[RMDB]
RNA sequence: GGGAACGACUCGAGUAGAGUCGAAAAAGACUGGGAAACCGCUAGGCAUGAGUGGUAUGGUGGGUCCCAUGGGGCUGUCACCCCAAACCACAGGACUGCCUCAGAGAUUUGGGGGGUGUUUUAAGGUCACAGUGGUCAAAUCUGACCUUGUGCCAUAAUCGAGUAUAUAGUUCGCUAUAUACUCGAUAAAAGAAACAACAACAACAAC
Reactivity to DMS in 0.01 (KOAc 150mM, MgCl2 10mM, bicine 150mM(pH8.5), 24C), signal-to-noise 1, nucleotides 027 to 156: a100g000a120c060u010g030g000g000a060a050a030c070c040g040c030u010a030g020g010c040a110u010g020a170g060u010g020g040u000a080u000g010g040u000g030g050g000u010c020c020c030a150u000g020g010g030g060c050u000g020u000c130a100c060c040c070c040a030a070a070c010c050a070c010a160g010g020a180c100u010g020c020c020u000c040a100g010a120g000a090u000u000u000g040g000g010g000g000g000u020g010u020u010u000u000a040a140g010g010u010c010a000c020a110g010u010g040g020u000c030a050a130a180u000c160u000g000a030c010c010u010u010g000u000g000c000c010a000u000a140
Reactivity to 2A3 in 0.01 (KOAc 150mM, MgCl2 10mM, bicine 150mM(pH8.5), 24C), signal-to-noise 4, nucleotides 027 to 156: a000g090a020c070u030g000g030g000a050a130a100c060c050g000c080u060a060g020g040c050a030u120g050a050g090u050g000g000u050a100u080g030g020u030g020g010g000u040c000c030c020a040u130g020g000g000g000c040u080g050u230c040a120c000c000c000c000a020a100a030c040c010a030c000a030g140g060a040c040u020g010c020c000u040c020a030g040a030g030a220u090u250u300g010g000g010g000g000g000u020g020u020u070u050u070a060a040g010g010u200c010a010c020a020g170u110g070g030u000c000a040a130a270u200c200u050g000a000c000c000u000u020g000u000g000c000c000a040u120a050